RNA sequence: GGGAACGACUCGAGUAGAGUCGAAAAUAGAACGUAUGGCUGAUCAGGCUAUGACUUCUAUGUAUAAGCAAGCACGUGCUGAAGACAAGAAAGCAAAAAUUGUCAGUGCUAUGCAAACUAUGUUGUUAAGAUACGAUAGGUUCGCCUAUCGUAUCUUAAAAGAAACAACAACAACAAC
Reactivity to DMS in 0.01 (KOAc 150mM, MgCl2 10mM, bicine 150mM(pH8.5), 24C), signal-to-noise 2, nucleotides 027 to 126: u000a020g000a020a000c170g020u000a040u000g000g020c010u000g030a190u020c300a170g000g000c000u010a010u000g010a090c110u000u000c000u000a010u010g010u010a110u000a080a180g000c000a010a070g030c010a010c040g030u010g030c170u000g010a120a080g000a020c020a010a030g010a100a110a180g050c300a000a070a070a060a070u000u000g010u000c030a120g040u000g020c000u000a090u000g020c040a080a030a110c080u010a010u000g020u010u000g020u000u010
Reactivity to 2A3 in 0.01 (KOAc 150mM, MgCl2 10mM, bicine 150mM(pH8.5), 24C), signal-to-noise 1, nucleotides 027 to 126: u010a000g010a000a040c130g000u000a010u010g030g000c030u010g030a190u240c120a070g020g000c010u020a020u070g200a090c010u010u000c000u000a000u050g070u010a280u020a140a050g050c000a010a010g040c040a000c040g010u100g030c060u130g090a230a040g010a020c000a010a060g080a090a060a010g130c100a000a030a000a210a080u010u010g000u000c070a090g000u010g010c000u020a130u110g080c010a000a030a000c040u090a050u220g070u080u000g010u010u050
Overview: This 177-nucleotide RNA was probed chemically with DMS and 2A3. The 2A3 profile rests on 811 reads. DMS adducts were read by reverse transcription with MarathonRT. It was measured as part of the RMDB library 15KREP. High DMS reactivity at an A or C suggests that its Watson-Crick edge is free.